[RMDB]
RNA sequence: GGGAACGACUCGAGUAGAGUCGAAAAUCAUGCUAUCACGAGGUAACUGGGUCAAGAUCAGUUACCUGUGAGCGAAAGUUCACAUUGUGUCAAUGAUCUUGACGUUGACGUAAUCGUGAUAGCAUGCCUACUCCUAUCUAUUCGUAGAUAGGAGUAGAAAAGAAACAACAACAACAAC
Reactivity to DMS in 0.01 (KOAc 150mM, MgCl2 10mM, bicine 150mM(pH8.5), 24C), signal-to-noise 9, nucleotides 027 to 126: u020c010a000u000g000c000u000a000u000c000a000c000g010a020g000g010u000a050a030c010u000g010g000g010u000c200a040a100g010a070u010c000a020g000u000u000a000c000c020u000g010u000g000a010g010c000g000a110a100a140g010u000u000c000a010c000a030u000u000g000u010g000u000c060a030a040u000g000a080u000c070u000u000g000a080c020g020u000u000g000a050c070g010u000a070a010u000c000g010u000g000a010u000a000g000c000a000u000g000c260
Reactivity to 2A3 in 0.01 (KOAc 150mM, MgCl2 10mM, bicine 150mM(pH8.5), 24C), signal-to-noise 9, nucleotides 027 to 126: u130c000a000u000g000c000u000a000u000c000a000c000g010a000g030g030u040a040a020c000u020g010g010g090u100c070a030a010g030a150u030c000a000g020u010u010a000c000c000u000g000u000g000a000g000c000g030a090a020a010g000u000u000c000a000c010a010u020u070g020u020g000u040c020a000a020u020g020a100u030c030u050u050g070a030c030g170u010u020g030a020c030g020u040a010a010u010c000g000u000g000a000u000a000g000c000a000u000g000c000